[RMDB]
RNA sequence: GGGAACGACUCGAGUAGAGUCGAAAACGAGCUACCUCCGAGUAAUGAGGGCGUAAACUUCUUCGAUUUCACCCGUGAACAAGGCUAUCAGUUAGAAGAGAGUUUUCCUGCCGAUCGUUCAACGGUACAUCCUGAAAAUAUUCGUAUUUUCAGGAUGAAAAGAAACAACAACAACAAC
Reactivity to 2A3 in 0.01 (KOAc 150mM, MgCl2 10mM, bicine 150mM(pH8.5), 24C), signal-to-noise 9, nucleotides 027 to 126: c010g010a020g040c070u140a090c020c010u000c020c050g150a110g180u200a120a220u190g020a020g010g040g000c010g030u080a070a080a060c020u030u020c000u040u030c030g120a130u050u100u130c060a060c020c000c010g010u020g010a020a010c030a060a030g010g000c020u090a060u290c070a080g070u090u170a030g010a050a000g060a010g010a010g020u000u020u030u030c010c010u010g000c010c000g030a090u120c050g020u030u020c030a090a030c020g010g010u010a030
Reactivity to DMS in 0.01 (KOAc 150mM, MgCl2 10mM, bicine 150mM(pH8.5), 24C), signal-to-noise 9, nucleotides 027 to 126: c070g010a220g010c070u010a090c020c010u000c010c110g000a250g010u010a110a120u010g010a040g000g000g010c060g010u000a040a080a050c070u000u000c020u000u000c020g010a160u010u010u000c130a110c110c010c020g010u000g010a040a040c080a150a100g000g010c060u010a070u010c140a090g010u010u000a120g010a050a030g000a060g010a080g010u000u000u000u000c010c010u000g010c010c000g010a080u010c100g010u000u000c020a080a060c020g000g010u010a210